[RMDB]
RNA sequence: GGGAACGACUCGAGUAGAGUCGAAAAGCUUGCCUCCGAGGAGGCGACAACGCUGAGGAUGGGAAAGCAUGCCUGAAUGACGUCAUGGAUGGGAAAGCAUGCCAGGUGGAUGGGAAAGCAUGCGGGCAUGCGAAAGGAUGGCGUGGAUGGGAAAGCACUCCUCCAAGUUUUUCGAAACUUGGAGGAGAAAAGAAACAACAACAACAAC
Reactivity to 2A3 in 0.01 (KOAc 150mM, MgCl2 10mM, bicine 150mM(pH8.5), 24C), signal-to-noise 2, nucleotides 027 to 156: g020c040u050u050g020c010c000u000c020c010g020a130g110g050a010g030g090c020g000a050c030a140a030c070g010c030u060g030a020g060g010a050u090g030g000g030a050a000a050g010c010a020u020g000c010c010u050g060a160a110u100g020a040c070g040u150c050a090u110g040g060a050u050g020g040g100a000a160a000g020c020a000u060g020c000c040a040g000g090u050g020g070a110u040g000g060g030a040a030a050g040c030a000u060g040c000g010g000g020c000a000u020g020c000g000a040a010a000g040g010a060u040g000g040c010g030u030g030g000a050u030g020g040g000a000a040a000g100c120a020